RNA sequence: GGGAACGACUCGAGUAGAGUCGAAAAUAUCGGCGGAUCUGGCAGUUAUUGCGUCGUGAGGGCCUUCACGUUAACCACAAGCGGGUAUACCGCAUUUAUCAUCUUAACGGCCUGAGUGUAAAGCGCAGUGACAUGGGAAUUUCGAUUCCCAUGUCACAAAAGAAACAACAACAACAAC
Reactivity to DMS in 0.01 (KOAc 150mM, MgCl2 10mM, bicine 150mM(pH8.5), 24C), signal-to-noise 2, nucleotides 027 to 126: u010a060u000c050g000g010c060g010g000a080u010c060u010g010g050c020a050g000u010u010a060u000u010g040c010g010u000c250g000u020g010a190g020g010g010c050c040u000u000c130a080c080g000u000u000a020a070c130c090a120c200a090a080g020c020g000g000g000u020a100u010a180c020c010g010c020a110u010u010u000a060u010c080a100u000c110u000u000a000a050c070g000g030c030c000u000g020a100g000u010g010u000a030a040a110g010c070g000c110a080
Reactivity to 2A3 in 0.01 (KOAc 150mM, MgCl2 10mM, bicine 150mM(pH8.5), 24C), signal-to-noise 1, nucleotides 027 to 126: u110a020u010c030g020g000c040g000g050a020u030c000u090g050g000c010a030g000u030u080a140u150u060g080c060g000u060c030g030u060g010a060g010g000g010c020c000u080u110c090a100c100g030u050u080a050a040c030c020a030c110a150a000g000c020g010g020g010u160a140u130a200c020c000g000c000a020u000u030u010a110u050c020a030u020c050u110u080a000a070c000g000g060c000c010u050g070a130g000u120g000u070a070a130a010g060c030g020c030a050
The record gives the reactivity of an RNA of 177 nucleotides to DMS and 2A3. It was measured as part of the RMDB library OK2TRN. For 2A3 the reverse transcriptase was SuperScript II with manganese. The reactions ran in a buffer of 150 mM KOAc, 10 mM MgCl2 and 150 mM bicine (pH 8.5), at 24 C.